[RMDB]
RNA sequence: GGGAACGACUCGAGUAGAGUCGAAAAUAUGUCAAAUUACAGUGACAUAGUCUUUAAUGCAAAAGUGCAGAAAGAGAGAGCUGUUAAAUCAGCAAGCGGCCAGACAACCGUCGGGAUAGAUCCACAGGUGAGGUAAUUAGUUCGCUAAUUACCUCACAAAAGAAACAACAACAACAAC
Reactivity to 2A3 in 0.01 (KOAc 150mM, MgCl2 10mM, bicine 150mM(pH8.5), 24C), signal-to-noise 2, nucleotides 027 to 126: u060a000u020g010u020c020a000a030a120u300u150a200c070a130g110u000g030a000c000a010u010a030g030u000c010u010u080u220a120a040u040g000c010a000a000a150a250g200u010g000c030a030g030a080a130a000g070a020g020a020g020a030g000c000u000g000u030u050a000a140a300u130c020a020g000c000a010a000g050c000g040g060c010c010a010g030a120c020a060a050c040c010g020u070c060g010g020g020a020u120a120g050a080u070c010c030a080c040a070g000
Reactivity to DMS in 0.01 (KOAc 150mM, MgCl2 10mM, bicine 150mM(pH8.5), 24C), signal-to-noise 2, nucleotides 027 to 126: u010a010u000g000u000c000a040a060a080u000u000a120c300a180g010u020g010a000c010a010u000a050g010u010c030u010u000u000a050a200u010g000c020a070a110a040a100g060u000g030c030a010g010a070a050a050g000a070g000a180g030a060g010c050u000g010u000u010a070a100a080u020c010a010g020c010a100a050g000c030g000g000c030c030a030g020a070c090a060a140c110c070g030u010c070g010g000g000a070u000a100g010a090u000c020c050a080c150a060g000

The data come from the RNA Mapping Database (RMDB), library RFMREP. Structure probing data (2A3 and DMS) for a 177-nucleotide construct. The reactions ran in a buffer of 150 mM KOAc, 10 mM MgCl2 and 150 mM bicine (pH 8.5), at 24 C. DMS adducts were read by reverse transcription with MarathonRT. For 2A3, 1,100 sequencing reads were counted. Reactivities are given for positions 27 through 126. For DMS, 1,251 sequencing reads were counted.